[RMDB]
RNA sequence: GGGAACGACUCGAGUAGAGUCGAAAAACGAGGUACGCCUCGAAAAUAUGACCGGUGUCAUGGCCUCUAGCACACAGAGGUCGCGUGGGUUCAACUCCCCCCCUUUUCCGAGGGUAUCGGAAACCAAAAAACACAAUUUGGUUCGCCAAAUUGUGAACAAACUGAUAGACUUCGGUCUAUCAGUUUGAAAAGAAACAACAACAACAAC
Reactivity to DMS in 0.01 (KOAc 150mM, MgCl2 10mM, bicine 150mM(pH8.5), 24C), signal-to-noise 1, nucleotides 027 to 156: a140c050g010a060g040g020u000a100c210g070c030c020u010c000g000a100a060a060a160u020a040u010g010a060c030c070g020g090u010g020u000c020a050u000g020g030c040c000u000c020u020a210g000c130a170c160a190c130a020g020a010g000g020u000c000g030c050g070u000g030g000g000u000u000c090a090a300c050u000c000c000c000c000c010c000c000u000u000u000u000c020c000g010a010g000g010g020u000a050u010c010g020g000a070a010a050c180c030a020a020a060a060a060a200c000a020c000a000a010u020u000u000g010g000u000u010c300g040c010c000a000a000a070u000u020g010u000g000a050a130
Reactivity to 2A3 in 0.01 (KOAc 150mM, MgCl2 10mM, bicine 150mM(pH8.5), 24C), signal-to-noise 3, nucleotides 027 to 156: a000c020g000a000g000g020u050a050c180g090c030c000u000c000g030a200a000a000a030u180a100u130g030a030c030c030g070g070u170g050u110c080a080u120g000g000c020c000u000c010u020a060g080c080a040c000a000c010a120g010a000g010g000u010c010g000c010g020u080g080g000g000u100u160c050a070a060c070u030c000c000c010c000c000c000c030u000u050u030u000c010c000g000a000g020g010g000u090a020u000c000g000g000a000a000a000c020c010a020a030a040a080a070a000c020a000c000a000a000u010u000u000g020g000u040u050c100g050c060c000a010a000a000u020u000g010u000g000a010a030